[RMDB]
RNA sequence: GGGAACGACUCGAGUAGAGUCGAAAAGAGUAGUAGUUCGCUACUACUCAAAGGCACUAAAGGCACAGUUCUAAAGUGCAUGGAACACGCCAAGUGCCCGUGAAAGUAAAUCCUUCGGGAUUUACAAGCAUUUGACUUGAUUCGUCAAGUCAAAUGCAAAAGAAACAACAACAACAAC
Reactivity to DMS in 0.01 (KOAc 150mM, MgCl2 10mM, bicine 150mM(pH8.5), 24C), signal-to-noise 2, nucleotides 027 to 126: g020a020g010u000a000g020u000a000g020u010u000c160g020c000u010a000c000u000a000c000u000c020a020a070a100g000g010c000a010c000u010a100a100a130g020g000c000a200c250a130g010u000u000c010u010a050a150a200g000u000g000c270a050u000g000g000a000a000c000a200c150g010c000c000a070a040g000u000g000c010c010c070g000u010g000a050a080a110g000u000a000a010a000u000c000c000u000u010c190g010g000g000a000u000u000u000a000c020a030a090
Reactivity to 2A3 in 0.01 (KOAc 150mM, MgCl2 10mM, bicine 150mM(pH8.5), 24C), signal-to-noise 2, nucleotides 027 to 126: g010a000g000u000a000g000u000a000g000u000u040c210g030c060u000a000c000u000a000c000u000c000a040a010a000g010g000c000a030c020u120a090a060a170g000g000c030a020c050a110g000u010u010c040u050a140a130a130g280u170g140c050a030u120g000g000a000a000c030a010c080g000c000c000a030a000g000u000g040c000c000c000g060u080g170a150a010a000g010u010a000a000a010u010c010c000u000u050c190g090g010g010a010u020u000u010a000c010a010a020
An RNA of 177 nucleotides, treated with DMS and 2A3 and read out base by base.
Source: RMDB library M2PK50, as collected in RNAgym.
Conditions: 150 mM KOAc, 10 mM MgCl2 and 150 mM bicine (pH 8.5), 24 C.
For DMS the reverse transcriptase was MarathonRT.
2A3 adducts were read by reverse transcription with SuperScript II with manganese.